[RMDB]
RNA sequence: GGGAACGACUCGAGUAGAGUCGAAAACGACAUAUGGCCGUACCUGAUGAGUGCUCUCUCUGAGUACGUGGCCGUACGGCGCGAUCCGAUCAUGGCCUAGGCCACUGCGUGUAGGAUCGGCCAGGCGCAACAACGGCAGUUUCGACUGCCGUUGUUGAAAAGAAACAACAACAACAAC
Reactivity to 2A3 in 0.01 (KOAc 150mM, MgCl2 10mM, bicine 150mM(pH8.5), 24C), signal-to-noise 1, nucleotides 027 to 126: c010g110a010c010a060u160a090u060g020g000c000c020g000u040a040c020c020u070g070a120u220g020a090g040u300g110c050u060c000u010c000u030c030u240g040a040g110u010a000c040g040u050g050g000c000c000g020u050a060c040g000g000c110g000c010g200a010u010c030c040g050a100u110c010a060u100g100g000c010c050u070a200g150g000c030c000a030c030u090g070c060g130u130g070u130a030g000g020a010u030c040g000g030c000c000a030g100g000c080g000
Reactivity to DMS in 0.01 (KOAc 150mM, MgCl2 10mM, bicine 150mM(pH8.5), 24C), signal-to-noise 4, nucleotides 027 to 126: c030g010a170c140a130u020a090u010g010g040c010c000g000u000a050c010c040u000g000a030u010g010a050g030u020g000c300u000c060u010c070u000c050u000g010a170g050u000a020c030g010u000g020g000c010c030g030u000a030c220g000g000c000g000c050g030a040u000c030c030g010a140u000c070a120u000g020g020c010c020u010a160g010g020c010c000a050c140u010g030c220g030u030g020u000a180g000g000a110u000c000g000g000c000c010a060g020g010c140g000